[RMDB]
RNA sequence: GGGAACGACUCGAGUAGAGUCGAAAACAAACAAACAACAGCACGUUCCCUCCGCAACACAGCGGAGCGCAGUGCGACGCAGGAAAAGAGGGAACACCUGCGAAAGGAGGCAGAAAACUGCCUCCAACGUAGCGUCGAGCUUCGGCUCGACGCUACGAAAAGAAACAACAACAACAAC
Reactivity to 2A3 in 0.01 (KOAc 150mM, MgCl2 10mM, bicine 150mM(pH8.5), 24C), signal-to-noise 1, nucleotides 027 to 126: c170a100a000a000c070a090a010a000c030a020a000c010a050g000c000a010c100g070u210u200c000c020c000u000c020c010g000c000a140a150c070a040c030a300g000c050g030g000a000g000c020g000c030a050g070u010g090c030g000a000c000g010c000a000g090g120a270a000a000a000g170a070g070g040g000a000a020c030a000c000c000u000g010c010g020a160a000a010g010g000a010g000g040c000a000g000a040a190a000a080c000u010g000c000c000u040c000c000a000a000